[RMDB]
RNA sequence: GGGAACGACUCGAGUAGAGUCGAAAAUCGCCCCGAAAUGAGGACUCCGGGGUCCCCUUCCGAAGGAACGGAGGGGGGUGACUAGGAAUCAGGAUCCAGUGGAUCCGUGGGAAUUAUCCCGUUCCACAUGCUCUGUAGUUCGCUACAGAGAAAAGAAACAACAACAACAAC
Reactivity to DMS in 0.01 (KOAc 150mM, MgCl2 10mM, bicine 150mM(pH8.5), 24C), signal-to-noise 7, nucleotides 027 to 129: u020c080g040c040c010c000c040g020a070a080a070u050g030a130g000g000a040c070u010c030c020g000g030g000g050u000c000c010c010c030u000u030c010c020g000a250a160g030g000a170a140c040g000g010a030g010g000g000g000g000g000u000g010a050c030u030a090g010g000a000a000u020c060a060g020g010a000u030c010c010a150g030u060g040g020a010u020c000c030g010u030g010g010g000a070a060u060u040a090u050c010c000c010g000u000u030c000c000a070c090a110u050g000
Reactivity to 2A3 in 0.01 (KOAc 150mM, MgCl2 10mM, bicine 150mM(pH8.5), 24C), signal-to-noise 9, nucleotides 027 to 129: u120c040g070c000c000c000c010g100a070a070a090u220g020a100g050g040a030c020u000c010c010g050g000g010g040u070c010c010c000c000u010u000c010c000g130a220a140g150g090a190a130c020g000g000a010g010g000g000g000g000g000u010g020a040c030u050a050g040g000a020a030u060c030a030g010g010a010u000c020c020a090g090u170g130g010a010u000c020c030g020u090g010g010g020a030a040u160u050a090u180c000c000c000g010u020u000c020c010a070c010a080u150g030

Conditions: 150 mM KOAc, 10 mM MgCl2 and 150 mM bicine (pH 8.5), 24 C. An RNA of 170 nucleotides, treated with DMS and 2A3 and read out base by base. Source: RMDB library 15KLIB, as collected in RNAgym. 2A3 adducts were read by reverse transcription with SuperScript II with manganese. The 2A3 profile rests on 213,912 reads.